[RMDB]
RNA sequence: GGGAACGACUCGAGUAGAGUCGAAAAGAUAUGGACUCUUUAGGACAUGUCGCAGAGGGUCGGAAACGACCCGAUCGACAACAGCCUAUGGAGUCCUAAGUCAAAGAGACACGUUCGCGUGUCUCAAGCGUUUAUAAAGCUUCGGCUUUAUAAACGCAAAAGAAACAACAACAACAAC
Reactivity to DMS in 0.01 (KOAc 150mM, MgCl2 10mM, bicine 150mM(pH8.5), 24C), signal-to-noise 1, nucleotides 027 to 126: g000a050u000a300u000g000g020a020c000u010c000u000u000u000a000g000g000a070c110a210u010g040u000c000g020c300a050g030a300g000g020g000u000c000g000g000a040a170a240c000g010a010c000c000c000g000a080u000c000g000a000c000a050a060c180a080g000c010c000u000a000u000g000g010a060g060u000c000c000u000a020a050g050u000c060a100a140a190g010a020g000a030c000a000c000g010u000u010c160g030c030g060u000g000u000c000u000c000a000a180
Background
An RNA of 177 nucleotides, treated with DMS and read out base by base. Conditions: 150 mM KOAc, 10 mM MgCl2 and 150 mM bicine (pH 8.5), 24 C. Source: RMDB library TTRDES, as collected in RNAgym.